[RMDB]
RNA sequence: GGGAACGACUCGAGUAGAGUCGAAAACUCCGCUGCCUACAAAAGAAAGCUCGAGGCCAUAACAUCGGCAGCACUGGAGCUCCAGCUGAGCAAACUGCGUCGCGAGCAGCUGUACACUCAGCAGCGCAUCCGUCGUAUGAUUCGUCAUACGACGGAUAAAAGAAACAACAACAACAAC
Reactivity to DMS in 0.01 (KOAc 150mM, MgCl2 10mM, bicine 150mM(pH8.5), 24C), signal-to-noise 2, nucleotides 027 to 126: c020u010c040c060g020c010u000g000c010c040u000a230c130a100a080a110a110g000a090a140a090g030c010u000c040g010a100g020g020c030c040a060u010a070a130c200a100u000c100g020g010c030a050g000c060a200c110u020g010g000a080g020c080u000c000c020a080g000c020u000g010a050g020c100a110a080a120c040u000g000c020g020u000c120g000c080g010a120g010c010a070g000c010u000g020u010a080c190a100c060u000c040a050g010c030a150g020c060g010c210
Reactivity to 2A3 in 0.01 (KOAc 150mM, MgCl2 10mM, bicine 150mM(pH8.5), 24C), signal-to-noise 3, nucleotides 027 to 126: c010u020c000c010g010c010u020g000c010c010u140a150c100a050a230a040a050g150a110a210a010g010c030u060c100g110a080g060g050c040c040a140u130a180a040c020a110u130c080g020g010c020a010g000c020a030c090u140g020g010a000g020c040u010c010c020a020g000c020u030g010a010g030c040a110a090a070c060u060g050c020g050u060c030g020c030g080a020g000c020a020g010c030u040g030u070a030c070a030c110u040c020a000g030c000a000g050c090g000c030
Chemical mapping of a 177-nucleotide RNA with DMS and 2A3. For 2A3 the reverse transcriptase was SuperScript II with manganese. The RNA was probed in 150 mM KOAc, 10 mM MgCl2 and 150 mM bicine (pH 8.5) at 24 C. DMS adducts were read by reverse transcription with MarathonRT.